[RMDB]
RNA sequence: GGGAACGACUCGAGUAGAGUCGAAAAGAUAUGGAAGGCGGACAUGCUGUCGCUCGGAAACGAGCGGUCAGCAACAGCCACCUUCCUAAGUCAAAGUCACUAACUUUCUUCGGAAAGUUAGUGACAACCUAUACGCUACGUUCGCGUAGCGUAUAGGAAAAGAAACAACAACAACAAC
Reactivity to DMS in 0.01 (KOAc 150mM, MgCl2 10mM, bicine 150mM(pH8.5), 24C), signal-to-noise 4, nucleotides 027 to 126: g000a020u000a300u000g010g010a020a010g000g010c030g010g010a080c090a200u000g010c010u000g010u000c000g000c000u010c000g000g000a080a080a120c000g020a010g020c000g010g010u010c010a000g000c010a020a030c290a170g000c010c000a010c000c000u000u000c000c000u000a010a070g000u000c030a110a100a140g010u000c000a010c000u000a000a000c000u000u000u000c000u000u020c170g020g000a020a010a010g000u000u000a000g010u000g010a000c000a010a050
Reactivity to 2A3 in 0.01 (KOAc 150mM, MgCl2 10mM, bicine 150mM(pH8.5), 24C), signal-to-noise 4, nucleotides 027 to 126: g020a020u050a040u120g000g000a010a000g000g010c030g030g020a140c080a170u170g000c000u000g000u000c000g000c010u000c000g010g010a050a050a010c010g000a000g000c020g010g020u190c010a000g000c020a010a010c010a000g030c010c000a000c000c000u000u010c000c010u010a100a010g020u010c060a140a070a040g000u010c000a000c010u000a010a000c000u020u020u020c010u050u070c180g090g000a000a000a000g000u000u000a000g000u000g000a000c000a000a000

Conditions: 150 mM KOAc, 10 mM MgCl2 and 150 mM bicine (pH 8.5), 24 C. The record gives the reactivity of an RNA of 177 nucleotides to DMS and 2A3. In probing experiments dimethyl sulfate is read out at A N1 and C N3, which are open when not base-paired. 2A3 adducts were read by reverse transcription with SuperScript II with manganese. For 2A3, 18,600 sequencing reads were counted.